[RMDB]
RNA sequence: GGGAACGACUCGAGUAGAGUCGAAAAGGGGUCUCGCGAUAAGGGACUAAUGAGCAUCGAUCGUACACUGAAGCCUCCACGGUGUACGGGAGCUCAUAGUCCCUUUUGACGCGAGACGGAGGCACCCAAAACCCGAUAAUCUUCGGAUUAUCGGGAAUCCCGUGUCAUGAUUCGUCAUGACACGGGAAAAAGAAACAACAACAACAAC
Reactivity to 2A3 in 0.01 (KOAc 150mM, MgCl2 10mM, bicine 150mM(pH8.5), 24C), signal-to-noise 2, nucleotides 027 to 156: g060g010g050g000u030c040u000c000g000c010g010a080u160a300a040g000g000g000a000c010u110a280a300u020g000a000g000c020a040u300c040g000a000u000c000g010u000a000c000a000c000u030g050a070a020g040c010c000u000c000c000a000c000g000g010u000g000u010a010c000g000g000g000a000g010c010u030c010a040u000a000g000u000c010c000c020u020u000u000u000g000a000c010g010c000g000a000g010a000c000g000g000a010g000g000c000a030c010c000c030a060a170a090a120c000c000c000g000a000u000a010a000u030c010u070u060c240g040g040a000u000u000a000u000c000g020g020g000a010a000